The data come from the RNA Mapping Database (RMDB), library OK3TST.
Chemical mapping of a 207-nucleotide RNA with 2A3.

RNA sequence: GGGAACGACUCGAGUAGAGUCGAAAAACAAAAGGGCAAACUGGGAUGAGGAUACACCCUGGACAAAUGAUAUCAGACAAUGUCCUGCAUUAGAUAACAUCAAAAUGAAUGUUUGGGAAGGAUCAGCGGUAUGGUCAGAGGAAGGCAUUGGAAUCAAGCCCUAAAAUCGGUUCGCCGAUUUUAGGGCAAAAGAAACAACAACAACAAC
Reactivity to 2A3 in 0.01 (KOAc 150mM, MgCl2 10mM, bicine 150mM(pH8.5), 24C), signal-to-noise 2, nucleotides 027 to 156: a010c080a000a120a000a020g060g010g010c070a070a160a050c030u030g040g020g010a060u120g000a050g030g000a000u020a050c050a070c010c010c000u010g120g010a010c020a000a080a060u180g080a010u050a040u230c040a020g030a200c060a120a090u030g000u030c010c040u020g070c040a020u000u050a020g070a140u130a120a060c000a050u080c020a000a130a000a000u140g080a090a010u070g050u040u160u050g000g020g020a040a010g020g000a020u070c010a000g050c110g070g000u030a040u090g030g040u060c020a050g000a000g060g000a010a010g010g010c020a000u260u280g020g010a000a010u220c060a090a000

2A3 adducts were read by reverse transcription with SuperScript II with manganese.